[RMDB]
An RNA of 177 nucleotides, treated with 2A3 and DMS and read out base by base. The data come from the RNA Mapping Database (RMDB), library OK2TRN. Values cover nucleotides 27 to 126. The reactions ran in a buffer of 150 mM KOAc, 10 mM MgCl2 and 150 mM bicine (pH 8.5), at 24 C.
RNA sequence: GGGAACGACUCGAGUAGAGUCGAAAAAGUUGGAUACCUCGUACCAGUCAAAACCGUGGGCACGCAGCGCGGUAUCGAUAAGCCCAUAGCGAUCGGCGUACACAUCCUCAUUCGGAAGAGGCAGCUGCCACAAUUCAGAUUUCGAUCUGAAUUGUGGAAAAGAAACAACAACAACAAC
Reactivity to 2A3 in 0.01 (KOAc 150mM, MgCl2 10mM, bicine 150mM(pH8.5), 24C), signal-to-noise 2, nucleotides 027 to 126: a000g110u130u090g060g020a040u100a130c000c040u020c030g010u060a080c050c010a080g150u140c050a070a050a080a070c060c040g070u030g050g000g020c070a020c100g050c020a030g000c030g000c010g000g010u050a030u030c010g010a030u050a150a100g000c030c000c000a020u050a020g070c070g030a060u080c050g020g010c040g000u050a020c000a010c010a100u050c030c000u040c030a090u130u110c030g070g020a100a040g010a090g100g000c010a020g020c000u060g050
Reactivity to DMS in 0.01 (KOAc 150mM, MgCl2 10mM, bicine 150mM(pH8.5), 24C), signal-to-noise 4, nucleotides 027 to 126: a060g010u000u000g020g000a090u000a050c030c010u000c030g020u000a120c060c050a140g010u000c080a060a080a120a100c100c070g030u010g010g010g020c050a090c090g020c130a110g010c020g020c100g020g000u000a020u000c060g000a060u000a060a120g010c020c000c020a090u020a080g000c050g000a060u010c070g010g000c030g000u000a050c100a050c090a080u010c030c020u010c080a090u000u010c110g010g000a110a080g000a060g020g010c100a040g000c070u000g010